An RNA of 207 nucleotides, treated with 2A3 and read out base by base.

RNA sequence: GGGAACGACUCGAGUAGAGUCGAAAAGGGGUCGGUCUACCCACCGAAUUUAAAGAGCAUCGAUCUAUACUGAAGCCUCCACGGUAUAGGGAGCUCUGUGCGUUCGAGGACCGACGGAGGCACCCAAAACUCCCGGUUAGUUCGCUAACCGGGAGAACAACGCACCAAACUUCGGUUUGGUGCGUUGAAAAGAAACAACAACAACAAC
Reactivity to 2A3 in 0.01 (KOAc 150mM, MgCl2 10mM, bicine 150mM(pH8.5), 24C), signal-to-noise 1, nucleotides 027 to 156: g160g000g030g000u010c000g000g000u010c010u010a160c070c040c050a020c020c000g000a000a010u010u120u160a290a230a000g010a000g000c010a010u300c030g010a000u020c010u010a000u000a020c000u050g060a130a010g000c000c000u000c000c000a000c000g000g040u000a000u000a000g000g000g000a010g030c000u000c000u000g020u020g020c050g000u010u000c000g000a000g000g000a000c000c000g020a000c120g000g000a000g000g000c000a030c000c040c000a050a130a100a150c020u000c030c010c000g000g000u000u000a010g010u020u050c300g000c190u000a000a000c000c000g010g020g010a000g000a000a000

The RNA was probed in 150 mM KOAc, 10 mM MgCl2 and 150 mM bicine (pH 8.5) at 24 C. 2A3 adducts were read by reverse transcription with SuperScript II with manganese.